[RMDB]
RNA sequence: GGGAACGACUCGAGUAGAGUCGAAAAAAGCUCAUUUUCGAAUGAGCUUGAAGCGUGAACGCAGGAUAACGCAGUAACGCGCCGCUGAACCUCCCAAGCGAAAGAUUAAGGUCUUCGGACCUUAAAACGGUAUGAAAGGAUUCGUCCUUUCAUACCGAAAAGAAACAACAACAACAAC
Reactivity to 2A3 in 0.01 (KOAc 150mM, MgCl2 10mM, bicine 150mM(pH8.5), 24C), signal-to-noise 3, nucleotides 027 to 126: a000a010g000c000u000c010a000u030u010u040u070c110g090a020a010u000g000a000g020c000u000u010g000a030a010g000c010g010u010g050a070a000c030g000c040a050g090g160a180u110a240a040c080g000c030a020g020u040a050a020c000g010c010g010c030c010g000c020u040g040a080a060c020c030u010c000c010c010a000a010g020c020g070a170a040a000g060a010u050u060a010a000g000g010u000c010u000u070c160g080g010a000c000c000u000u010a010a010a000a000
Reactivity to DMS in 0.01 (KOAc 150mM, MgCl2 10mM, bicine 150mM(pH8.5), 24C), signal-to-noise 5, nucleotides 027 to 126: a000a000g010c000u000c000a010u000u000u000u030c140g020a010a010u000g000a010g020c000u010u000g000a060a080g010c020g000u000g000a140a160c300g010c020a080g000g000a170u000a090a130c130g000c010a060g000u000a110a070c070g010c020g030c140c020g000c010u000g000a110a070c100c090u010c000c000c000a110a070g000c060g010a100a080a120g010a220u000u010a010a000g000g010u000c000u000u020c210g010g000a010c000c000u000u000a010a030a090a150